Chemical mapping of a 207-nucleotide RNA with DMS and 2A3. DMS adducts were read by reverse transcription with MarathonRT. The DMS profile rests on 7,761 reads. 2A3 adducts were read by reverse transcription with SuperScript II with manganese. Conditions: 150 mM KOAc, 10 mM MgCl2 and 150 mM bicine (pH 8.5), 24 C. The data come from the RNA Mapping Database (RMDB), library OK3TST.

[RMDB]
RNA sequence: GGGAACGACUCGAGUAGAGUCGAAAAGAACUCCUGACCUCAAGCGAUCCGCCCGCCUUGGCCUCCCAAAGUUCUGGGAUUACAGGCAUGAGCCACUGCGCCUGGCCAUGGAGUGUGACUUUACAGUAGAGAUUCAUUUGUCUAACAUCUCUGUUAACCACUAAUUUUAGUUCGCUAAAAUUAGUGGAAAAGAAACAACAACAACAAC
Reactivity to DMS in 0.01 (KOAc 150mM, MgCl2 10mM, bicine 150mM(pH8.5), 24C), signal-to-noise 3, nucleotides 027 to 156: g000a110a060c010u010c010c010u000g000a030c020c010u010c060a080a110g010c030g010a080u000c060c070g000c020c020c020g020c010c030u010u000g010g020c040c050u000c000c010c010a040a110a140g020u000u000c080u000g010g000g020a100u000u020a060c060a030g030g000c020a080u000g020a090g030c010c010a090c050u000g020c050g010c040c010u000g010g000c030c030a090u000g020g010a080g010u020g050u000g000a110c040u000u000u000a070c070a120g030u000a070g020a060g000a100u000u000c030a140u000u010u010g010u010c040u010a100a150c080a040u000c020u000c020u010g020u000u010a100a300
Reactivity to 2A3 in 0.01 (KOAc 150mM, MgCl2 10mM, bicine 150mM(pH8.5), 24C), signal-to-noise 6, nucleotides 027 to 156: g040a020a010c000u010c000c010u020g060a080c000c030u070c080a060a020g010c000g020a050u020c030c030g030c000c020c010g010c010c010u010u030g030g020c000c010u050c010c000c000a060a160a010g130u200u110c060u050g010g000g030a020u050u200a060c060a030g000g020c010a040u100g040a020g030c020c020a060c080u120g010c010g000c020c020u010g020g000c010c000a060u130g010g010a030g000u060g040u060g040a040c020u080u080u100a050c030a060g080u150a030g030a010g020a050u060u070c040a080u100u140u300g090u040c050u030a050a050c020a130u040c020u010c010u060g040u120u120a050a040